[RMDB]
RNA sequence: GGGAACGACUCGAGUAGAGUCGAAAAACUCGGCGUUGAGCCGAUCGGCGAUCGGUUGGGGCAGUGCCCAGGCCAAUACGGGGAUACCGGGUGUCGAAGCCGCCGCGAGCGCAGCUUCGGUUGCGCGCGUCGUUGCGUACUUCGGUACGCAACGACGAAAAGAAACAACAACAACAAC
Reactivity to DMS in 0.01 (KOAc 150mM, MgCl2 10mM, bicine 150mM(pH8.5), 24C), signal-to-noise 1, nucleotides 027 to 126: a060c000u000c020g000g000c030g000u040u030g030a270g000c010c000g000a050u030c120g020g020c080g000a050u000c080g000g000u020u090g000g050g000g030c120a130g000u000g020c010c000c010a110g010g000c020c000a060a170u050a110c030g000g010g000g010a190u040a040c040c010g000g000g000u020g000u020c000g000a200a130g000c290c010g020c050c040g060c090g000a100g000c000g050c030a020g000c010u000u080c120g020g030u010u000g040c030g010c000g000
Reactivity to 2A3 in 0.01 (KOAc 150mM, MgCl2 10mM, bicine 150mM(pH8.5), 24C), signal-to-noise 3, nucleotides 027 to 126: a000c040u010c010g020g020c020g040u060u130g070a000g050c000c000g020a030u050c020g110g020c050g050a090u020c010g040g070u060u180g100g000g000g050c110a130g070u060g130c000c000c000a080g020g000c020c000a060a050u210a120c070g000g020g000g050a060u050a120c000c000g090g000g000u090g010u030c030g010a150a010g020c020c000g040c010c020g060c010g090a080g000c010g020c020a010g010c000u080u160c190g080g000u020u040g010c020g000c000g010